An RNA of 207 nucleotides, treated with DMS and 2A3 and read out base by base. For DMS, 7,746 sequencing reads were counted.
RNA sequence: GGGAACGACUCGAGUAGAGUCGAAAAGUCUUAUCGAGAGCGGCAGAGGGACUGGCCCGAUGAAGCCCGGCAACCUAACUUUAUUUAAGCGUAAAGUGAAGGUGCUAAUUCCAGCAAAAUGGUGUAUAAACGACCGUUAACUUCGGUUAACGGUCAAGUAUAGUUUAUCGUUCGCGAUAAACUAUACAAAAGAAACAACAACAACAAC
Reactivity to DMS in 0.01 (KOAc 150mM, MgCl2 10mM, bicine 150mM(pH8.5), 24C), signal-to-noise 3, nucleotides 027 to 156: g000u000c020u010u000a050u000c020g020a110g000a070g040c060g040g010c040a070g020a140g010g010g000a110c060u000g010g010c010c010c010g020a060u010g010a090a070g000c010c000c070g010g000c020a040a030c000c010u000a170a030c000u000u000u000a020u000u000u000a130a220g030c300g020u000a010a010a020g010u000g000a090a040g010g010u000g000c000u000a050a120u010u000c020c010a050g000c050a080a060a070a190u000g010g020u000g010u000a080u000a050a100a180c140g000a020c000c000g020u010u000a000a010c010u000u020c300g030g010u000u000a000a010c010g000g020u000c000a000a060
Reactivity to 2A3 in 0.01 (KOAc 150mM, MgCl2 10mM, bicine 150mM(pH8.5), 24C), signal-to-noise 4, nucleotides 027 to 156: g030u020c050u120u130a150u140c090g040a040g030a020g140c150g020g000c030a000g000a000g020g000g020a030c020u020g020g020c010c000c020g050a140u030g000a010a000g010c020c010c010g000g010c020a050a080c000c010u020a020a020c010u030u030u030a050u040u140u120a130a040g160c050g030u000a000a000a010g010u030g050a120a050g000g000u000g000c000u010a010a030u120u010c010c000a010g040c120a020a030a020a170u140g060g000u080g030u070a080u140a120a180a020c130g000a010c000c000g010u000u000a000a010c000u010u030c120g040g000u000u000a000a000c030g000g000u000c000a000a000